[RMDB]
RNA sequence: GGGAACGACUCGAGUAGAGUCGAAAAACAUCACUGAGUGCAAGGAGGAGGACAUCAUGUGCAUGUAUGAAGCCGAAAUGCAGUGGAAGAGGGACUACAAAGUCGACCAAGAAAUUAUCAACAUUAUGCAGGAUCGGCUCAAAGCCUGUCAGCAGAACAUAAUAGCUGCUUUCGAGCAGCUAUUAUGAAAAGAAACAACAACAACAAC
Reactivity to DMS in 0.01 (KOAc 150mM, MgCl2 10mM, bicine 150mM(pH8.5), 24C), signal-to-noise 2, nucleotides 027 to 156: a000c010a080u020c080a070c040u010g000a130g000u010g010c040a080a060g000g000a090g030g020a110g010g000a080c050a060u020c060a120u020g000u000g060c030a090u000g040u020a070u000g000a090a040g070c050c050g000a080a050a180u000g040c040a110g030u000g010g000a030a160g000a080g010g020g030a030c020u000a260c130a030a080a070g000u000c030g020a070c000c020a040a120g000a070a040a040u010u010a140u010c050a040a090c040a110u000u000a070u010g020c070a100g050g010a160u000c050g040g070c000u000c020a100a080a090g000c000c000u000g010u000c000a070g030c050a130g080a060a140
Reactivity to 2A3 in 0.01 (KOAc 150mM, MgCl2 10mM, bicine 150mM(pH8.5), 24C), signal-to-noise 3, nucleotides 027 to 156: a000c010a050u060c020a030c040u060g030a000g060u090g030c050a060a030g020g010a000g000g020a040g000g030a000c010a050u050c030a050u120g050u090g050c040a010u050g040u090a100u110g160a040a010g000c030c000g020a040a080a000u080g010c030a010g000u040g060g050a070a040g030a090g010g010g010a010c020u080a030c150a040a100a040g000u030c020g010a090c010c030a020a050g080a050a070a020u240u180a060u180c050a000a040c010a050u100u110a070u180g000c010a000g050g020a080u080c030g020g000c000u030c080a070a070a010g000c000c000u040g020u020c000a010g050c020a010g010a060a000